The record gives the reactivity of an RNA of 207 nucleotides to DMS and 2A3.
RNA sequence: GGGAACGACUCGAGUAGAGUCGAAAAAGGAAAAGUAAGCCCUAUUGCUGGCGUAUAAAGCACGUUUGUGGAAACUGCAAGGUGGUUCACCUUCCUCCAGACACUUCACUGCCAUCUGCUGGAAAUUGUUCAUAAUGUACUAAUCUACAUUGACACAUAUUUAUAGGAGUUUCGACUCCUAUAAAUAAAAAGAAACAACAACAACAAC
Reactivity to DMS in 0.01 (KOAc 150mM, MgCl2 10mM, bicine 150mM(pH8.5), 24C), signal-to-noise 3, nucleotides 027 to 156: a050g010g000a040a060a080a140g020u000a070a120g000c020c020c030u000a130u010u010g010c020u000g030g020c030g040u000a080u000a090a090a150g030c020a060c090g000u000u000u010g040u010g020g000a100a070a080c050u000g010c050a070a070g010g040u000g000g010u010u000c040a060c030c030u000u000c020c030u000c050c030a150g010a120c070a040c060u000u000c080a070c020u000g010c010c030a090u000c040u000g010c020u000g000g010a060a090a080u000u000g010u000u000c040a080u010a070a010u000g010u000a060c030u000a110a170u000c040u000a010c010a020u000u000g010a120c080a080c090a180
Reactivity to 2A3 in 0.01 (KOAc 150mM, MgCl2 10mM, bicine 150mM(pH8.5), 24C), signal-to-noise 3, nucleotides 027 to 156: a000g090g010a080a050a000a000g040u100a010a070g000c000c020c010u060a120u060u130g050c060u040g020g000c020g000u060a050u070a200a090a020g020c040a020c100g020u010u070u090g060u040g040g030a090a050a030c010u050g020c020a020a030g060g000u050g000g160u090u150c010a040c020c000u040u050c010c010u000c030c000a010g030a060c030a020c020u100u080c050a020c060u040g030c030c010a060u060c060u070g030c020u000g030g000a010a100a110u090u050g000u040u020c020a030u050a170a010u050g000u020a030c050u090a050a060u070c000u080a030c010a010u100u100g030a010c030a000c050a180
The DMS profile rests on 8,238 reads. The 2A3 profile rests on 1,926 reads. It was measured as part of the RMDB library OK3TST. The RNA was probed in 150 mM KOAc, 10 mM MgCl2 and 150 mM bicine (pH 8.5) at 24 C.